[RMDB]
Notes:
This 207-nucleotide RNA was probed chemically with DMS and 2A3. Source: RMDB library OK3TST, as collected in RNAgym. 2A3 adducts were read by reverse transcription with SuperScript II with manganese. For DMS the reverse transcriptase was MarathonRT. The reactions ran in a buffer of 150 mM KOAc, 10 mM MgCl2 and 150 mM bicine (pH 8.5), at 24 C. For DMS, 3,727 sequencing reads were counted. Reactivities are given for positions 27 through 156.

RNA sequence: GGGAACGACUCGAGUAGAGUCGAAAAUCUUGCUUAGCAGUUUAUCUUUCUGUAGGCCCAAUUAUAUUAAAUCAUGUUCUUAUAUGGUUUAGAUCCAGAGAUCGUUGGGAACUCUGUGUGUAACUUAUGUACAUUUAGCCAAAUCCAAUAUGCUCUAUAUUUUACCGUAGUUCGCUACGGUAAAAUAAAAAGAAACAACAACAACAAC
Reactivity to DMS in 0.01 (KOAc 150mM, MgCl2 10mM, bicine 150mM(pH8.5), 24C), signal-to-noise 2, nucleotides 027 to 156: u010c040u000u010g010c060u010u020a180g020c020a080g030u000u020u000a050u000c050u000u010u000c040u010g010u000a080g030g010c020c030c000a060a100u010u000a130u010a170u000u010a000a040a000u000c000a010u000g010u000u000c120u000u010a070u000a050u010g020g020u000u000u000a070g020a120u000c060c060a170g010a130g010a030u000c010g000u000u010g000g010g000a070a140c060u000c060u010g010u000g000u000g010u000a020a080c060u000u010a060u010g000u000a060c030a070u000u010u000a090g020c060c050a040a080a120u000c040c070a040a100u010a100u000g000c040u000c030u000a250
Reactivity to 2A3 in 0.01 (KOAc 150mM, MgCl2 10mM, bicine 150mM(pH8.5), 24C), signal-to-noise 3, nucleotides 027 to 156: u020c010u010u070g000c010u050u050a050g040c000a030g040u100u080u110a120u140c060u020u170u000c010u030g040u060a060g050g000c000c030c020a070a070u210u090a130u040a040u130u130a020a010a030u020c000a000u020g040u170u080c080u240u300a110u040a000u140g020g010u030u000u020a040g010a050u030c020c040a010g010a010g000a100u030c080g020u060u060g000g020g010a020a020c030u000c020u030g090u000g020u000g020u090a070a070c030u150u110a080u210g050u030a010c020a090u070u060u080a010g030c030c020a070a050a050u040c020c000a060a020u100a110u180g030c020u020c020u060a020